[RMDB]
RNA sequence: GGGAACGACUCGAGUAGAGUCGAAAAUGAAAUAUGUGGCAACCGCAAAGAUAAGCAACGCACCGAUCAUGCUGAAAAAAACACGAGGUGCAUACAUGGUGCUCUCCUCCCGAGAACGACUUCUCCACAGCUUUAUGCAUUUCGAUGCAUAAAGCUGAAAAGAAACAACAACAACAAC
Reactivity to 2A3 in 0.01 (KOAc 150mM, MgCl2 10mM, bicine 150mM(pH8.5), 24C), signal-to-noise 3, nucleotides 027 to 126: u110g050a050a090a000u250a020u070g050u050g030g000c020a100a010c010c000g070c110a070a040a050g080a020u160a090a010g010c020a030a050c100g010c000a010c030c020g040a080u120c040a060u090g000c030u060g060a070a070a000a000a000a000a030c130a000c060g020a080g000g000u020g030c000a000u020a000c020a030u100g060g000u040g010c000u000c010u000c030c000u010c020c000c000g050a030g040a050a050c060g030a030c020u020u030c010u030c020c040a020
Reactivity to DMS in 0.01 (KOAc 150mM, MgCl2 10mM, bicine 150mM(pH8.5), 24C), signal-to-noise 3, nucleotides 027 to 126: u020g020a090a050a050u020a040u040g000u000g000g000c050a040a110c060c050g020c110a070a070a150g030a060u030a090a090g000c100a100a120c110g020c030a020c110c000g020a070u000c050a060u010g000c120u000g000a000a020a080a050a160a090a070c080a060c050g000a150g000g000u010g000c040a040u010a040c090a060u000g020g000u010g000c000u000c070u000c020c030u000c070c010c010g000a060g000a060a060c100g000a090c150u000u010c000u000c000c030a250